Source: RMDB libraries RFM100 and RFMREP, as collected in RNAgym.
An RNA of 177 nucleotides, treated with 2A3 and DMS and read out base by base.
Reactivities are given for positions 27 through 126.
Conditions: 150 mM KOAc, 10 mM MgCl2 and 150 mM bicine (pH 8.5), 24 C.
RNA sequence: GGGAACGACUCGAGUAGAGUCGAAAAGGAAUGAAUAACAUGUUCUUUUGCUCUGUGCAUGGAGAUGCCACCAUGCGCUCUCGGGCUCUUCUGUUUUUGCUCUUCGUGCUUCUGCCUAUGCUGCCCGCCAACAUACCAUGUUCGCAUGGUAUGUUGGAAAAGAAACAACAACAACAAC
Reactivity to 2A3 in 0.01 (KOAc 150mM, MgCl2 10mM, bicine 150mM(pH8.5), 24C), signal-to-noise 7, nucleotides 027 to 126: g060g040a040a030u090g050a080a120u210a230a040c060a080u180g090u110u060c000u020u040u050u040g030c020u020c030u070g020u030g000c010a010u020g020g000a110g020a080u160g060c020c010a050c000c000a010u020g000c020g010c020u000c010u010c000g010g060g000c030u000c000u060u030c020u040g150u020u040u000u080u110g020c020u010c010u060u060c040g040u040g050c000u040u030c020u020g030c020c000u050a060u120g010c000u030g000c010c000c010g010
Reactivity to DMS in 0.01 (KOAc 150mM, MgCl2 10mM, bicine 150mM(pH8.5), 24C), signal-to-noise 4, nucleotides 027 to 126: g000g010a040a040u010g010a110a140u030a130a170c180a080u020g010u010u010c000u000u000u000u000g000c060u000c040u000g040u010g000c040a010u000g010g000a110g010a070u000g010c120c090a140c010c010a030u000g010c060g010c120u010c050u020c080g010g000g000c040u000c050u000u000c020u000g010u000u010u000u010u030g010c040u010c040u000u000c030g040u010g010c040u000u010c030u000g000c030c000u010a040u020g010c050u000g000c010c000c000g000